Record summary
This 177-nucleotide RNA was probed chemically with DMS and 2A3. Source: RMDB library M2PK50, as collected in RNAgym. High DMS reactivity at an A or C suggests that its Watson-Crick edge is free. For 2A3, 7,122 sequencing reads were counted. The RNA was probed in 150 mM KOAc, 10 mM MgCl2 and 150 mM bicine (pH 8.5) at 24 C.
RNA sequence: GGGAACGACUCGAGUAGAGUCGAAAAUCUGUUCCCUUCGGGGAACAGAACUGCGCCUGGACUUAAUGCCAUUGCACUUAAGAAAAUAAACAAACAAAAUAAGCCCUUCUGGUUUCGACCAGAAGAAGUGAAUGUAAUGUUUCGACAUUACAUUCACAAAAGAAACAACAACAACAAC
Reactivity to DMS in 0.01 (KOAc 150mM, MgCl2 10mM, bicine 150mM(pH8.5), 24C), signal-to-noise 3, nucleotides 027 to 126: u010c000u010g010u010u000c000c000c010u000u000c180g030g040g000g000a010a000c000a000g000a000a100c120u010g020c180g030c010c000u000g040g000a130c020u000u000a030a050u000g000c010c150a100u000u000g020c040a030c170u000u000a050a050g000a090a100a080a060u000a070a070a050c100a070a070a090c100a040a030a080a100u000a100a160g000c130c120c000u000u000c000u000g000g000u000u000u020c190g020a020c000c000a000g000a000a000g000a050a060
Reactivity to 2A3 in 0.01 (KOAc 150mM, MgCl2 10mM, bicine 150mM(pH8.5), 24C), signal-to-noise 5, nucleotides 027 to 126: u000c000u000g000u000u000c010c010c000u000u000c220g070g000g000g010a010a000c000a000g010a000a010c040u090g020c030g050c020c010u040g070g030a080c010u050u070a040a020u060g020c030c030a160u080u260g020c040a050c050u040u070a040a030g070a080a100a090a060u260a070a090a020c060a070a100a020c030a040a130a070a130u140a130a060g020c030c000c010u000u000c000u010g000g010u040u060u090c180g040a010c000c000a010g000a010a000g000a020a020